[RMDB]
RNA sequence: GGGAACGACUCGAGUAGAGUCGAAAACUAAUGGUCUUGUAUUCGGCUUAUACAAGAAUAUGUGCACAGGUAGUCCUUCUAUAGUUGAAUUUAAUAGGUUGGCUACCUGUGACUGGACUGAAAGUGGCAACCACCAACUUCGGUUGGUGGAAAAGAAACAACAACAACAAC
Reactivity to 2A3 in 0.01 (KOAc 150mM, MgCl2 10mM, bicine 150mM(pH8.5), 24C), signal-to-noise 6, nucleotides 027 to 129: c030u050a050a090u130g070g000u000c000u010u030g010u010a010u020u140c040g140g040c190u170u080a010u000a020c020a010a000g000a020a000u140a060u140g140u080g040c010a000c000a010g000g020u000a000g040u080c020c010u050u000c000u010a040u020a110g110u060u190g110a120a110u100u080u090a120a040u040a020g100g000u020u050g010g000c000u010a000c010c000u000g000u000g000a000c000u000g010g030a020c030u030g050a180a090a020g040u040g060g000c000a030a080
Reactivity to DMS in 0.01 (KOAc 150mM, MgCl2 10mM, bicine 150mM(pH8.5), 24C), signal-to-noise 6, nucleotides 027 to 129: c030u020a090a040u030g000g000u000c010u040u080g030u020a010u000u000c160g030g000c250u000u040a070u000a030c060a010a030g010a060a050u030a070u030g030u000g050c010a010c020a000g000g000u010a000g010u030c010c090u030u020c000u000a000u040a090g030u030u050g040a160a140u070u070u020a080a020u040a040g000g050u020u030g010g020c010u000a020c020c020u020g000u000g000a000c080u000g020g010a100c090u040g030a050a060a020g000u040g020g010c150a090a120
Source: RMDB library 15KLIB, as collected in RNAgym. Structure probing data (2A3 and DMS) for a 170-nucleotide construct. The reactions ran in a buffer of 150 mM KOAc, 10 mM MgCl2 and 150 mM bicine (pH 8.5), at 24 C. Values cover nucleotides 27 to 129. For DMS the reverse transcriptase was MarathonRT. The DMS profile rests on 22,415 reads. For 2A3 the reverse transcriptase was SuperScript II with manganese.